Conditions: 150 mM KOAc, 10 mM MgCl2 and 150 mM bicine (pH 8.5), 24 C. The record gives the reactivity of an RNA of 177 nucleotides to DMS and 2A3. For 2A3 the reverse transcriptase was SuperScript II with manganese. For DMS, 5,036 sequencing reads were counted.

RNA sequence: GGGAACGACUCGAGUAGAGUCGAAAAGAUAUGGAUUAGUCUGCUAUGACUAUUCGGAAACGAACGAAUCAUAGAACUACAGGACUAAUCCUAAGUCAAAACAGCAAGAGCUUCGGCUCUUGCUGAAGCGUAUUACAUUGUUCGCAAUGUAAUACGCAAAAGAAACAACAACAACAAC
Reactivity to DMS in 0.01 (KOAc 150mM, MgCl2 10mM, bicine 150mM(pH8.5), 24C), signal-to-noise 5, nucleotides 027 to 126: g020a010u010a300u000g000g000a010u000u000a000g010u000c000u000g000c020u000a010u010g010a010c110u000a300u000u000c010g010g000a130a100a160c000g010a010a020c070g010a080a080u000c000a010u000a000g010a150a060c180u010a180c210a100g000g010a010c010u000a010a010u000c010c000u010a020a080g010u000c030a090a100a110a230c000a000g000c000a000a010g000a010g020c000u000u010c250g030g000c000u010c000u000u000g010c000u000g000a010a030
Reactivity to 2A3 in 0.01 (KOAc 150mM, MgCl2 10mM, bicine 150mM(pH8.5), 24C), signal-to-noise 5, nucleotides 027 to 126: g020a010u080a020u130g000g000a000u000u000a000g010u010c040u040g020c010u020a010u010g000a020c060u030a060u000u010c010g020g010a100a110a060c040g020a030a010c030g060a070a280u020c000a010u010a020g040a100a140c180u300a100c300a150g060g070a010c000u000a000a010u000c000c000u000a090a000g040u020c030a000a000a170a220c010a010g000c010a000a000g000a010g010c020u070u100c270g170g000c000u010c000u000u020g000c000u000g000a000a000